[RMDB]
RNA sequence: GGGAACGACUCGAGUAGAGUCGAAAACUUUCAAGUCAGGAGUGAAAGGCUACGGCUCAACCGUAGUAAGCUCUUGAAACUGGGAGACUUGAGUGCAGGAGAGGAGAGUGGAAUUCCUAGUGUAGCGGUGAAAUGCGUAGAUAUUAGGAGGAACACAUCGGAGUCCAUAUUUCGAUAUGGACUCCGAAAAAGAAACAACAACAACAAC
Reactivity to 2A3 in 0.01 (KOAc 150mM, MgCl2 10mM, bicine 150mM(pH8.5), 24C), signal-to-noise 1, nucleotides 027 to 156: c010u070u080u020c040a080a010g070u010c010a000g000g000a000g010u090g140a090a100a040g200g000c000u000a000c000g010g040c050u040c230a040a100c010c010g000u000a000g000u010a080a010g000c000u010c000u030u020g000a040a030a030c000u000g000g010g020a040g000a020c010u060u090g050a010g030u030g000c060a030g020g000a050g010a000g000g000a000g010a040g010u070g000g020a040a050u050u010c000c000u020a060g030u000g030u050a070g050c010g040g020u130g040a100a080a020u060g030c030g050u070a030g080a080u040a080u070u120a010g010g010a010g000g070a100a010c040a000c010a090
The record gives the reactivity of an RNA of 207 nucleotides to 2A3. 2A3 adducts were read by reverse transcription with SuperScript II with manganese. The reactions ran in a buffer of 150 mM KOAc, 10 mM MgCl2 and 150 mM bicine (pH 8.5), at 24 C. Source: RMDB library OK3TST, as collected in RNAgym.